[RMDB]
RNA sequence: GGGAACGACUCGAGUAGAGUCGAAAAGCCUUGGCAAGGAGAUUUCACUUUGACAUGAACAUCGAGGUUAUUUCCAUGUACAGUCAGAAUGGCAAGAUAAACAUGCCCAUGUCAGUCAAGACUUGUGCCACUGUGGCUAUUUCGAUAGCCACAGUGGAAAAGAAACAACAACAACAAC
Reactivity to 2A3 in 0.01 (KOAc 150mM, MgCl2 10mM, bicine 150mM(pH8.5), 24C), signal-to-noise 2, nucleotides 027 to 126: g030c010c030u010u020g010g060c030a040a020g070g010a050g020a040u030u090u090c050a050c100u080u060u070g060a030c040a130u060g070a080a040c010a040u010c030g010a050g040g000u030u080a050u040u070u000c000c010a010u050g040u050a050c030a050g060u000c010a000g070a120a070u070g000g000c000a040a030g010a130u140a070a080a050c040a060u090g030c000c000c000a030u050g010u000c000a020g030u050c050a030a020g010a020c000u060u090g040u060g040
Reactivity to DMS in 0.01 (KOAc 150mM, MgCl2 10mM, bicine 150mM(pH8.5), 24C), signal-to-noise 2, nucleotides 027 to 126: g010c020c080u020u000g000g000c010a090a060g000g030a100g000a130u010u000u020c070a070c060u000u020u000g040a040c030a120u000g030a080a020c090a060u000c140g020a060g000g000u010u020a110u020u000u000c000c020a120u010g020u000a090c100a050g020u000c070a100g000a050a090u000g000g010c060a010a090g010a140u010a030a120a100c160a050u000g020c020c020c000a150u010g020u000c010a080g000u000c030a080a140g000a020c010u000u010g000u010g020